[RMDB]
RNA sequence: GGGAACGACUCGAGUAGAGUCGAAAAAGUAGGUUACGACAUUAAACUCAAAACCAAUGAGGAUGAUUUUGUGGAUGAAUUUUAUGGCUAUGAUAGAUCAGUGGGUGUCCAUGAUUAUAUAGAUGAAUCAAUUAAUAAAGUAGUAUAUGGAAGAGAGAACACUUUUACGGUUCGCCGUAAAAGUGUUAAAAGAAACAACAACAACAAC
Reactivity to DMS in 0.01 (KOAc 150mM, MgCl2 10mM, bicine 150mM(pH8.5), 24C), signal-to-noise 2, nucleotides 027 to 156: a140g040u010a060g010g010u000u010a140c200g000a110c040a110u010u010a060a130a100c050u000c010a030a100a080a150c050c030a070a140u030g010a100g070g000a090u010g010a090u000u010u000u010g110u000g000g010a120u000g040a050a030u020u010u010u000a060u010g010g030c040u020a040u010g010a110u000a050g000a030u000c020a180g040u000g010g010g000u000g040u000c020c060a060u000g010a010u000u010a100u000a300u000a190g010a060u010g000a050a070u010c020a070a090u010u000a020a120u010a080a080a130g040u010a070g020u010a020u010a020u000g010g010a040a100g010a100g020a130g010
Reactivity to 2A3 in 0.01 (KOAc 150mM, MgCl2 10mM, bicine 150mM(pH8.5), 24C), signal-to-noise 2, nucleotides 027 to 156: a000g080u090a020g030g040u070u040a060c060g050a000c070a030u130u160a130a080a050c010u010c070a040a100a100a080c010c030a010a090u060g030a010g000g040a020u040g030a060u080u050u170u240g040u020g020g030a050u020g040a080a080u080u050u040u040a040u070g020g000c010u000a030u140g040a060u070a060g000a010u060c040a000g020u060g020g010g050u070g050u000c040c020a010u090g010a000u050u060a060u010a040u100a170g020a020u030g040a030a040u060c030a000a050u060u150a060a070u150a150a020a000g010u020a020g020u010a070u010a020u120g030g000a020a000g030a010g000a010g030